[RMDB]
RNA sequence: GGGAACGACUCGAGUAGAGUCGAAAACUUCUAUCUUGGCGUCGGCCAGCGCCGUUAUGGAGGCUUCCACUUCGCCGCGUGGCACGGAUACUAGGCCCAGGCCGCGUAGGAAGCCAAGCGCGGUGUAAAACGGCAGAAAUUUCGAUUUCUGCCGUUUAAAAGAAACAACAACAACAAC
Reactivity to 2A3 in 0.01 (KOAc 150mM, MgCl2 10mM, bicine 150mM(pH8.5), 24C), signal-to-noise 1, nucleotides 027 to 126: c010u110u000c030u050a080u030c020u060u050g020g020c040g080u110c110g130g040c030c010a030g000c040g010c000c000g020u040u010a070u140g140g050a030g010g010c040u000u010c010c010a110c060u200u180c070g020c050c010g000c030g080u100g040g000c060a090c100g040g000a060u110a220c060u160a140g190g000c010c000c010a070g200g000c010c000g020c000g010u000a020g000g030a060a000g030c000c010a000a010g000c030g000c000g000g000u000g020u020a120
Reactivity to DMS in 0.01 (KOAc 150mM, MgCl2 10mM, bicine 150mM(pH8.5), 24C), signal-to-noise 3, nucleotides 027 to 126: c030u000u010c030u000a040u000c030u000u000g030g030c040g010u000c140g000g020c050c050a120g010c010g020c010c010g000u000u000a050u000g010g000a170g010g000c040u000u000c000c000a140c140u010u010c130g010c050c040g000c070g020u000g010g020c040a090c130g020g000a190u000a080c090u010a170g020g000c040c010c090a190g010g030c020c050g000c120g030u000a090g030g000a060a050g010c010c010a020a060g020c130g000c010g010g040u010g010u010a030